RNA sequence: GGGAACGACUCGAGUAGAGUCGAAAAGUGAGUGGGUGCGCAAGUGGGUGCGCGAAUGCGCGGGGCGUGCGAGGUGAGUGUGUGCGCCCGCCCCUGCGCCCCUCCCCCUGCCUACAACUUGAUCUUACAUAGUGUGUAUGUUCGCAUACACACUAUGAAAAGAAACAACAACAACAAC
Reactivity to 2A3 in 0.01 (KOAc 150mM, MgCl2 10mM, bicine 150mM(pH8.5), 24C), signal-to-noise 4, nucleotides 027 to 126: g090u070g080a080g040u110g020g040g010u130g040c010g020c030a070a120g090u170g140g060g060u110g030c020g000c020g070a170a080u290g000c000g000c000g000g000g000g000c030g000u040g010c010g010a050g060g130u160g100a170g040u190g000u020g020u020g030c010g000c020c010c000g020c010c000c000c000u010g000c000g000c000c010c000c000u010c000c020c000c000c000u010g010c000c000u090a070c010a080a040c030u050u130g030a020u030c000u010u010a030
Reactivity to DMS in 0.01 (KOAc 150mM, MgCl2 10mM, bicine 150mM(pH8.5), 24C), signal-to-noise 3, nucleotides 027 to 126: g010u010g000a110g020u000g010g000g020u010g010c010g010c030a030a120g030u010g010g010g020u010g020c020g030c010g000a090a040u010g050c010g060c010g000g000g000g010c060g010u000g000c000g020a080g010g020u010g000a110g020u010g020u010g010u010g010c010g000c000c020c020g000c000c000c000c020u020g020c000g000c010c040c010c010u000c020c010c000c020c020u000g010c010c000u010a040c080a150a040c080u000u000g010a140u010c030u000u000a280